Conditions: 150 mM KOAc, 10 mM MgCl2 and 150 mM bicine (pH 8.5), 24 C. This 177-nucleotide RNA was probed chemically with 2A3 and DMS. For DMS the reverse transcriptase was MarathonRT.
RNA sequence: GGGAACGACUCGAGUAGAGUCGAAAACUUCGCAACUUCGGUUGCGAAGAAUGGCAGCUCGUCCCGGCGCUGCGUUCGCCGGGUUAUAAAACAUAACACAUCACUGGCUACCAUUCGUGGUAGCCAAGUUUAAAUCUCUCUUCGGAGAGAUUUAAACAAAAGAAACAACAACAACAAC
Reactivity to 2A3 in 0.01 (KOAc 150mM, MgCl2 10mM, bicine 150mM(pH8.5), 24C), signal-to-noise 2, nucleotides 027 to 126: c000u000u010c000g010c010a000a010c010u070u050c230g150g000u000u000g000c000g000a000a000g010a010a000u020g030g010c030a050g000c000u020c050g080u110c000c000c000g000g000c010g000c080u230g040c020g030u050u040c010g010c020c000g010g030g000u060u040a130u080a030a080a000a000c030a050u170a100a040c060a000c010a140u130c010a020c140u020g000g000c000u000a000c000c000a010u020u070c170g110u030g000g010u000a000g000c000c000a000a000
Reactivity to DMS in 0.01 (KOAc 150mM, MgCl2 10mM, bicine 150mM(pH8.5), 24C), signal-to-noise 3, nucleotides 027 to 126: c000u000u000c000g010c000a010a000c000u010u010c210g020g000u010u000g010c000g000a010a010g010a040a050u000g000g020c110a120g010c020u000c040g010u010c010c010c010g000g020c030g000c160u010g010c050g010u000u000c010g010c020c000g000g000g000u000u000a010u020a030a020a040a040c180a070u000a020a030c030a030c070a130u020c200a130c190u000g010g010c000u000a010c000c000a020u000u000c230g030u000g000g010u000a010g010c000c000a000a010